[RMDB]
RNA sequence: GGGAACGACUCGAGUAGAGUCGAAAAGGGGAUGCAGGGGAUACCAAUUUGAUCUACCAGCAAGUGAUGUUAGUAGGCUUGAGUAUUAUCGAGUUGACCCACAGGAGGCAAGAGAAUACCGGCGAGGCAUACGCUCCUAGUUCGCUAGGAGCGUAUGAAAAGAAACAACAACAACAAC
Reactivity to 2A3 in 0.01 (KOAc 150mM, MgCl2 10mM, bicine 150mM(pH8.5), 24C), signal-to-noise 2, nucleotides 027 to 126: g010g050g020g010a030u080g000c040a020g080g010g000g020a010u050a090c060c010a040a060u150u080u140g040a100u050c000u070a180c020c020a000g000c020a040a080g090u040g120a170u140g070u260u130a070g040u020a010g030g080c020u000u020g040a050g080u130a080u300u040a060u140c010g000a000g000u000u050g090a100c000c050c010a020c000a000g080g010a060g000g030c030a060a000g020a000g000a130a050u060a090c020c020g040g020c030g010a010g030g000
Reactivity to DMS in 0.01 (KOAc 150mM, MgCl2 10mM, bicine 150mM(pH8.5), 24C), signal-to-noise 4, nucleotides 027 to 126: g020g000g000g030a130u010g010c060a080g000g010g000g000a080u010a070c120c080a060a110u000u010u010g010a070u010c070u000a090c030c040a100g020c040a050a110g000u010g010a080u010g000u000u000a040g010u000a110g000g010c030u000u000g010a130g010u000a060u010u000a080u000c040g000a050g020u010u000g000a230c030c010c030a110c190a080g000g000a050g020g000c040a030a060g010a070g010a050a080u010a070c060c040g020g000c050g010a070g010g010